[RMDB]
RNA sequence: GGGAACGACUCGAGUAGAGUCGAAAAACUUGUAUAGGCGAUUAAUAAAUCUUCUGUAAAUGCUGUAAGAGGAUUACCCCUUGAGGUUUCAGCACUAGGCUGCUCUAGCGAUUGAUCAAUGCAUUUGUAACGGAAAGACAGUUCGCUGUCUUUCCAACGUAUAUUUAAACUUCGGUUUAAAUAUACGAAAAGAAACAACAACAACAAC
Reactivity to DMS in 0.01 (KOAc 150mM, MgCl2 10mM, bicine 150mM(pH8.5), 24C), signal-to-noise 2, nucleotides 027 to 156: a070c030u000u010g040u000a100u010a080g040g020c020g000a090u000u000a120a070u000a030a110a100u000c030u000u000c020u000g010u000a080a060a060u000g010c040u010g000u000a100a140g000a040g030g010a130u000u000a090c040c000c000c070u000u000g000a110g020g010u000u000u000c040a040g040c010a020c080u000a070g030g000c070u000g020c120u000c030u000a100g050c040g010a100u010u000g010a050u000c100a030a080u010g010c040a100u000u000u000g020u010a080a150c070g030g000a030a020a020g000a030c000a050g020u000u000c300g030c020u010g040u000c000u000u010u000c010c000a010a010
Reactivity to 2A3 in 0.01 (KOAc 150mM, MgCl2 10mM, bicine 150mM(pH8.5), 24C), signal-to-noise 3, nucleotides 027 to 156: a010c050u120u120g060u090a110u090a080g080g000c050g030a040u060u120a120a100u190a100a180a040u040c040u100u000c030u040g090u100a040a140a090u070g020c030u060g060u130a050a030g020a040g040g000a010u010u040a060c000c000c000c000u000u100g050a060g060g040u040u080u160c000a010g020c010a010c080u060a050g180g000c040u030g010c000u050c000u050a020g040c020g060a030u030u150g000a020u080c080a040a040u100g040c030a030u000u030u110g060u020a040a020c050g010g010a000a000a000g000a000c000a000g000u040u080c140g000c050u000g000u000c000u000u000u000c000c000a000a000

The record gives the reactivity of an RNA of 207 nucleotides to DMS and 2A3. The DMS profile rests on 2,758 reads. The data come from the RNA Mapping Database (RMDB), library M2RFPK. The RNA was probed in 150 mM KOAc, 10 mM MgCl2 and 150 mM bicine (pH 8.5) at 24 C. Reactivities are given for positions 27 through 156.